[RMDB]
RNA sequence: GGGAACGACUCGAGUAGAGUCGAAAAGUACCCUUGUUCGCAAGGGUACAAAGACAGACUUCACUGUCUUAAAGAAGGUAACAUCUCAGUUACAAUAAGAGAAAAGCACCUACUUCGGUAGGUGCAAUCACAGAUGAAGCUUCGGCUUCAUCUGUGAAAAAGAAACAACAACAACAAC
Reactivity to 2A3 in 0.01 (KOAc 150mM, MgCl2 10mM, bicine 150mM(pH8.5), 24C), signal-to-noise 1, nucleotides 027 to 126: g000u000a010c000c000c020u000u000g020u020u040c130g060c080a000a000g000g020g000u000a000c000a000a000a000g010a000c000a010g000a040c000u130u050c180a060c080u050g040u030c030u000u130a130a180a000g130a040a060g180g000u010a000a020c000a050u060c080u050c150a060g000u000u020a040c010a050a090u230a130a040g090a000g030a040a040a020a060g000c000a000c000c000u030a020c020u090u120c300g020g000u000a000g000g010u000g000c000a000a000
Reactivity to DMS in 0.01 (KOAc 150mM, MgCl2 10mM, bicine 150mM(pH8.5), 24C), signal-to-noise 1, nucleotides 027 to 126: g010u000a010c000c000c000u000u000g010u040u010c180g040c000a000a000g000g000g010u010a000c000a020a040a020g000a000c020a010g000a300c150u000u020c300a140c020u000g000u020c000u000u000a070a070a070g020a120a030g020g000u000a000a000c020a110u000c070u000c090a040g000u020u020a030c020a170a120u000a070a100g000a100g000a100a030a150a210g020c000a000c020c000u000a010c000u000u000c210g020g000u000a000g010g010u000g020c000a020a010